Conditions: 150 mM KOAc, 10 mM MgCl2 and 150 mM bicine (pH 8.5), 24 C. An RNA of 177 nucleotides, treated with 2A3 and DMS and read out base by base. For 2A3, 6,836 sequencing reads were counted. For DMS the reverse transcriptase was MarathonRT.
RNA sequence: GGGAACGACUCGAGUAGAGUCGAAAAGCGUCUGAUUGAGUCUACUCAGUUCUCAAUGGCUCAUCAGGAUGUGCGCUAUUACUUGAACGGUAUGCUGUUUGAGACUGAAGGCGAAGAGCUACGCACCAAGUGCAGCUUAAUUCGUUAAGCUGCACUUAAAAGAAACAACAACAACAAC
Reactivity to 2A3 in 0.01 (KOAc 150mM, MgCl2 10mM, bicine 150mM(pH8.5), 24C), signal-to-noise 6, nucleotides 027 to 126: g020c010g030u050c060u020g030a100u080u130g010a030g010u010c010u020a110c040u070c090a060g040u290u050c030u000c030a010a080u110g000g000c010u020c020a010u020c010a020g050g030a110u150g060u060g050c050g020c070u060a080u140u120a120c020u050u070g050a110a010c040g060g020u120a060u190g090c010u030g040u100u040u060g030a020g010a040c050u040g040a050a010g060g000c040g030a060a010g000a030g050c020u030a000c020g020c000a020c040c020
Reactivity to DMS in 0.01 (KOAc 150mM, MgCl2 10mM, bicine 150mM(pH8.5), 24C), signal-to-noise 7, nucleotides 027 to 126: g000c050g010u000c030u000g000a100u010u010g010a190g010u000c000u000a090c120u000c040a080g010u010u000c050u000c070a080a080u010g000g010c000u000c040a040u000c010a020g000g010a130u010g020u000g020c080g010c050u010a070u000u010a070c050u010u000g010a080a090c130g010g020u000a050u010g020c030u000g000u000u000u000g000a040g000a080c070u000g010a070a140g000g000c020g000a100a080g000a070g010c040u000a040c060g010c060a160c080c120